Structure probing data (2A3 and DMS) for a 207-nucleotide construct.
The 2A3 profile rests on 1,591 reads.
The data come from the RNA Mapping Database (RMDB), library OK3TST.
Values cover nucleotides 27 to 156.
Conditions: 150 mM KOAc, 10 mM MgCl2 and 150 mM bicine (pH 8.5), 24 C.
RNA sequence: GGGAACGACUCGAGUAGAGUCGAAAAAACAAUAUUAUUGUGAGGAAUGUAAAGUGAUAUAAUCAGACAUUUACGCCAAUUAUAAAUCACACUGCAAAAGAACUGAAAUCAUAGCAAACAGUCUAUUGGACCACAGCGCAAUCAAAUUUGAAAUCAAUAGUAAUAUUAUCUUCGGAUAAUAUUACUAAAAAGAAACAACAACAACAAC
Reactivity to 2A3 in 0.01 (KOAc 150mM, MgCl2 10mM, bicine 150mM(pH8.5), 24C), signal-to-noise 2, nucleotides 027 to 156: a020a000c090a050a050u180a070u220u000a040u080u090g010u010g010a070g010g030a100a060u080g000u050a040a150a020g030u080g070a020u070a020u030a090a140u110c060a020g090a060c070a070u080u140u150a080c080g010c000c000a010a010u100u010a060u080a070a130a030u050c000a000c030a010c090u070g000c020a000a070a000a080g020a140a010c030u050g030a040a040a020u090c040a040u090a050g010c060a140a050a000c000a020g030u010c000u080a090u100u100g060g020a010c030c000a010c040a030g030c000g030c040a000a040u040c000a020a100a190u200u160u180g090a140a090a010u080c010a010a070
Reactivity to DMS in 0.01 (KOAc 150mM, MgCl2 10mM, bicine 150mM(pH8.5), 24C), signal-to-noise 2, nucleotides 027 to 156: a080a110c010a090a120u000a140u000u000a040u000u010g000u020g010a170g010g020a060a050u030g020u000a050a060a100g020u010g010a090u000a030u000a050a040u010c030a180g030a030c020a130u000u000u010a080c140g070c080c020a100a040u010u010a090u010a060a050a120u010c000a010c030a150c040u010g000c020a050a060a090a080g010a020a070c060u000g020a040a090a110u000c080a060u020a070g010c040a130a050a090c030a060g030u010c080u000a150u010u000g010g020a050c060c010a230c040a050g030c040g010c050a040a050u000c090a040a030a170u000u000u010g000a100a060a100u010c030a000a200